[RMDB]
RNA sequence: GGGAACGACUCGAGUAGAGUCGAAAAUCCCUAUUACCCGCAAGGCGUAAUGCGGGCACCAGUAACUCCUACCCUAUGGUGUCUCCUAUCUGUAGGUCCCAGUGGAGCGAUGAAGCCUGCCCAGCGGCUUACGUCAAUUCUUCGGAAUUGACGUAAGAAAAGAAACAACAACAACAAC
Reactivity to 2A3 in 0.01 (KOAc 150mM, MgCl2 10mM, bicine 150mM(pH8.5), 24C), signal-to-noise 2, nucleotides 027 to 126: u000c010c000c010u030a140u110u170a040c020c010c000g000c030a020a110g070g010c070g040u090a090a080u100g000c010g000g000g000c020a020c010c020a030g080u070a060a040c010u010c020c010u010a020c000c000c000u020a050u070g020g010u020g060u020c060u050c030c020u110a120u120c030u050g060u040a010g030g080u050c060c050c000a050g040u070g030g010a060g000c000g020a020u040g040a040a010g000c020c000u030g000c020c010c000a030g010c020g050g040
Reactivity to DMS in 0.01 (KOAc 150mM, MgCl2 10mM, bicine 150mM(pH8.5), 24C), signal-to-noise 4, nucleotides 027 to 126: u000c000c000c000u000a050u010u000a090c040c000c020g020c110a100a120g000g010c240g020u000a090a050u010g040c060g020g010g020c050a040c120c040a040g000u010a140a080c060u000c010c020u000a110c110c020c030u010a060u000g010g010u000g010u000c090u000c070c070u000a040u000c040u000g000u000a050g010g000u010c060c070c050a130g010u010g010g010a050g000c050g010a100u000g010a090a150g000c050c040u000g000c030c050c070a160g000c090g000g000

The data come from the RNA Mapping Database (RMDB), library RFMREP. An RNA of 177 nucleotides, treated with 2A3 and DMS and read out base by base. For 2A3 the reverse transcriptase was SuperScript II with manganese. For 2A3, 2,451 sequencing reads were counted. DMS adducts were read by reverse transcription with MarathonRT. Conditions: 150 mM KOAc, 10 mM MgCl2 and 150 mM bicine (pH 8.5), 24 C.